RNA sequence: GGGAACGACUCGAGUAGAGUCGAAAAAAACGCCAGCGGCACGUCCGGUCCUUGUUCCUGCCGCCACUCUUUCAGUGUUUGCGCAGUGUAAGAGGGGGCAUUGCGCUUUAGCUCGCGUUCAUCAAGAACUGCGUCUUUUUUUCGAAAAAGACGCAGUAAAAGAAACAACAACAACAAC
Reactivity to DMS in 0.01 (KOAc 150mM, MgCl2 10mM, bicine 150mM(pH8.5), 24C), signal-to-noise 1, nucleotides 027 to 126: a050a080a020c060g020c000c010a020g070c020g020g010c040a050c030g000u000c130c050g020g000u000c020c010u000u000g000u010u000c040c020u000g000c050c020g010c090c030a090c040u010c130u000u000u000c070a010g000u000g020u000u020u020g040c130g000c010a040g020u010g000u000a030a140g040a050g020g010g000g030g010c020a050u010u010g000c030g010c000u000u020u010a120g010c030u000c200g020c040g000u000u000c030a090u020c110a090a150g020a090

Structure probing data (DMS) for a 177-nucleotide construct. DMS adducts were read by reverse transcription with MarathonRT. The DMS profile rests on 913 reads.